[RMDB]
RNA sequence: GGGAACGACUCGAGUAGAGUCGAAAAAUAAACCACCACCAGCGCGACCUGGUCCACCACGAGCUGGUCGGCGGCCACGCGCGCUCCCGCCACCACCGCGACCACCUCCUCGCGCAGGUACAAAAAACCAAUUGAUAUACUUCGGUAUAUCAAUUGGAAAAGAAACAACAACAACAAC
Reactivity to 2A3 in 0.01 (KOAc 150mM, MgCl2 10mM, bicine 150mM(pH8.5), 24C), signal-to-noise 2, nucleotides 027 to 126: a000u140a040a090a050c030c040a030c020c010a020c000c010a030g010c010g000c010g020a030c010c020u040g010g010u030c000c010a130c050c020a060c110g070a060g030c140u040g000g020u050c080g040g000c000g000g000c040c050a090c110g070c010g000c020g030c080u020c010c010c010g030c020c010a010c010c000a010c010c040g040c030g030a010c000c010a030c010c040u090c000c010u000c000g000c000g030c020a010g010g020u060a060c050a010a100a020a010a010a010
Reactivity to DMS in 0.01 (KOAc 150mM, MgCl2 10mM, bicine 150mM(pH8.5), 24C), signal-to-noise 3, nucleotides 027 to 126: a090u020a090a060a130c040c010a170c150c090a050c020c020a090g030c010g010c000g000a030c090c140u000g000g000u000c080c090a080c120c040a070c050g000a110g010c200u000g000g020u000c140g010g010c050g020g000c040c020a050c080g000c050g020c070g010c050u010c100c020c010g010c000c000a060c010c050a030c020c020g030c030g010a090c070c180a050c050c020u000c040c090u000c000g030c030g000c020a040g010g000u000a060c050a000a060a050a050a030a060